[RMDB]
RNA sequence: GGGAACGACUCGAGUAGAGUCGAAAAAGGUGAUUUUUCCUGCACCUUUAUCAAUGGAGGAACUCGACUUUGCUGUGGGUCCCAAAGGGACCUUAGGUGCAGACAGUUACCGGCGGUGAAGUGUGAGCAUAGGUUCGUGUCUUCGGACACGAACCAACUCUAAAGAACGCUUCGGCGUUCUUUAGAGAAAAGAAACAACAACAACAAC
Reactivity to DMS in 0.01 (KOAc 150mM, MgCl2 10mM, bicine 150mM(pH8.5), 24C), signal-to-noise 1, nucleotides 027 to 156: a050g020g010u000g010a080u010u000u000u010u000c070c120u000g000c040a020c020c000u010u010u020a100u010c020a000a130u000g020g010a160g000g010a070a080c060u000c000g070a070c030u010u010u010g020c020u010g070u000g010g000g000u000c000c000c000a090a150a170g020g000g010a040c000c000u000u010a010g010g040u000g020c070a110g020a150c130a150g020u000u000a070c000c020g040g020c140g000g000u010g010a020a030g020u000g020u010g000a070g020c070a100u000a070g010g000u030u010c000g060u000g000u000c010u000u000c300g040g020a020c010a020c000g010a010a000c000c020a010a020
Reactivity to 2A3 in 0.01 (KOAc 150mM, MgCl2 10mM, bicine 150mM(pH8.5), 24C), signal-to-noise 2, nucleotides 027 to 156: a000g050g000u050g010a090u060u000u030u040u070c010c010u020g010c000a020c000c000u030u160u060a100u090c090a090a060u140g130g020a050g040g050a080a060c020u030c050g040a030c010u020u050u070g030c040u050g030u090g040g000g000u000c000c020c030a100a130a070g020g000g000a020c030c020u050u070a020g000g020u010g010c010a010g060a180c040a020g020u040u080a000c000c030g030g000c020g030g000u000g020a040a020g030u050g040u070g050a030g030c040a100u120a140g000g000u000u000c000g000u000g000u010c000u040u040c180g090g000a000c000a010c000g000a000a000c000c000a000a000